[RMDB]
RNA sequence: GGGAACGACUCGAGUAGAGUCGAAAACAUCCAGUGUUCGCACUGGAUGAGAGGAAUGUGGAUCGGCAAACUACAUACCAAAAGCUGAGCUCGAUAGAGCAACGAUUUCGUCGUUCGCGACGAAAAAGUUACAAGCUUCUUUCGAGAAGCUUGUAACAAAAGAAACAACAACAACAAC
Reactivity to 2A3 in 0.01 (KOAc 150mM, MgCl2 10mM, bicine 150mM(pH8.5), 24C), signal-to-noise 4, nucleotides 027 to 126: c000a000u000c000c000a010g000u000g040u040u070c180g050c090a000c010u000g030g000a000u000g000a020g010a000g000g030a080a030u050g010u040g040g030a100u100c110g140g020c110a060a110a020c020u040a010c010a050u080a080c000c020a080a070a030a020g070c070u090g070a010g020c000u020c020g160a250u130a230g010a010g010c020a020a020c030g040a050u000u020u010c010g000u000c000g000u000u030c210g000c000g050a000c000g010a000a000a000a000a000
Reactivity to DMS in 0.01 (KOAc 150mM, MgCl2 10mM, bicine 150mM(pH8.5), 24C), signal-to-noise 3, nucleotides 027 to 126: c010a020u000c000c000a010g040u000g000u000u010c210g030c000a010c000u010g000g000a000u000g000a080g000a100g010g000a050a050u010g010u000g010g000a080u010c040g020g020c180a060a160a070c040u000a050c030a040u000a100c050c040a060a060a040a110g020c110u000g010a180g000c000u020c010g000a110u000a050g000a040g010c030a060a070c160g010a260u000u000u000c010g050u000c010g010u000u000c180g020c000g000a000c000g000a000a010a040a060a160